[RMDB]
RNA sequence: GGGAACGACUCGAGUAGAGUCGAAAAGCACAUACCAUUAUGAUUGUUGUUAUGUAAUAAUAAUACCACAAGCUCUACCACCUCACCAGGUGCCAUGUAUUUGGCUGAAGCUAAUUGCAUAUAUUAGUCUGUCAAUCAUUUCAAUGAUACUGUGAGAAGUAGGGAGUAGGUUCGCCUACUCCCUACUAAAAGAAACAACAACAACAAC
Reactivity to 2A3 in 0.01 (KOAc 150mM, MgCl2 10mM, bicine 150mM(pH8.5), 24C), signal-to-noise 1, nucleotides 027 to 156: g000c010a030c000a160u220a090c030c170a100u240u210a080u300g160a300u050u000g010u010u000g010u030u010a020u090g050u000a030a000u070a230a060u060a050a000u160a130c030c030a020c020a170a000g000c000u000c010u070a040c000c040a010c000c040u000c010a050c040c010a050g000g070u090g040c020c000a030u100g100u140a160u110u030u030g000g000c020u020g060a060a000g000c010u000a020a000u040u080g000c060a090u120a030u000a000u290u020a020g070u050c090u040g070u000c010a020a030u000c000a000u000u300u110c130a220a000u030g020a020u020a140c030u090g000u030g060a090g040a070